[RMDB]
RNA sequence: GGGAACGACUCGAGUAGAGUCGAAAAGCCAUCCCAGUGUUCAGACUACCUGUUCAGGAGGCUGGGACAUGUACAGUAGUCUGCACAUUGGUUAGGCAAAAGGUUUUGUUUGUUCGCAAACAAAACCGUGAAACUAUACCUUCGGGUAUAGUUUCACAAAAGAAACAACAACAACAAC
Reactivity to 2A3 in 0.01 (KOAc 150mM, MgCl2 10mM, bicine 150mM(pH8.5), 24C), signal-to-noise 2, nucleotides 027 to 126: g000c000c000a020u040c020c000c010a000g000u000g010u010u010c000a000g010a010c000u000a020c020c090u020g010u020u030c020a010g020g090a090g120g060c080u080g070g010g020a040c030a100u090g010u010a010c010a010g010u010a000g000u010c000u000g010c020a000c000a000u000u010g010g020u030u070a070g000g000c000a020a040a010a100g000g000u000u000u000u000g000u020u000u000g030u020u070c190g000c110a000a000a000c000a000a010a000a000c010c000
Reactivity to DMS in 0.01 (KOAc 150mM, MgCl2 10mM, bicine 150mM(pH8.5), 24C), signal-to-noise 4, nucleotides 027 to 126: g020c000c000a180u000c300c000c000a020g010u000g020u010u000c000a020g010a030c000u000a020c130c080u000g000u010u000c010a060g010g010a120g000g030c040u000g020g000g010a060c030a090u010g000u000a030c060a040g010u000a020g000u000c000u000g000c090a020c010a000u010u000g010g010u000u010a250g000g000c010a050a040a140a130g000g010u000u000u000u000g010u000u000u000g010u000u010c200g010c000a010a000a000c000a010a000a000a010c000c020

The record gives the reactivity of an RNA of 177 nucleotides to 2A3 and DMS. It was measured as part of the RMDB library RFMREP. The DMS profile rests on 3,995 reads. The 2A3 profile rests on 11,502 reads. Reactivities are given for positions 27 through 126.